An RNA of 177 nucleotides, treated with 2A3 and DMS and read out base by base. Reactivities are given for positions 27 through 126. It was measured as part of the RMDB library OK1LIB. For 2A3 the reverse transcriptase was SuperScript II with manganese. DMS adducts were read by reverse transcription with MarathonRT. The reactions ran in a buffer of 150 mM KOAc, 10 mM MgCl2 and 150 mM bicine (pH 8.5), at 24 C.
[RMDB]
RNA sequence: GGGAACGACUCGAGUAGAGUCGAAAAGAGGUGAUAGCUCGAUGCGUACCGCGUCGCUUCGAGCUGACUAUCUCGUAGCGUAGAACGCGGUGAAUACGCUUCGAGUUAGUCGAAUGAUCGCUUCGAAGGGUUAAGUAUUCUUCGGAAUACUUAACCCAAAAGAAACAACAACAACAAC
Reactivity to 2A3 in 0.01 (KOAc 150mM, MgCl2 10mM, bicine 150mM(pH8.5), 24C), signal-to-noise 3, nucleotides 027 to 126: g020a010g000g010u020g020a030u020a020g020c010u000c000g010a010u020g010c000g010u040a050c010c040g060c030g030u040c010g000c000u020u020c000g000a000g000c010u020g010a020c000u020a030u060c000u000c000g000u000a000g000c000g010u020a030g060a240a060c050g010c040g110g030u030g000a010a040u070a020c000g000c020u000u010c000g000a000g010u030u040a000g010u030c010g020a060a030u170g060a000u020c000g010c010u010u020c030g020a160a090
Reactivity to DMS in 0.01 (KOAc 150mM, MgCl2 10mM, bicine 150mM(pH8.5), 24C), signal-to-noise 3, nucleotides 027 to 126: g000a020g010g010u000g010a010u000a070g010c000u010c000g000a010u000g020c000g020u000a070c010c000g010c020g020u000c010g000c010u010u010c000g000a000g010c140u000g010a050c220u020a090u000c000u010c000g010u000a000g020c000g020u010a120g030a150a140c030g020c020g000g010u020g000a150a160u020a050c000g000c000u000u000c000g000a010g000u000u000a020g000u020c060g040a140a070u040g000a060u000c000g010c010u000u000c010g000a130a090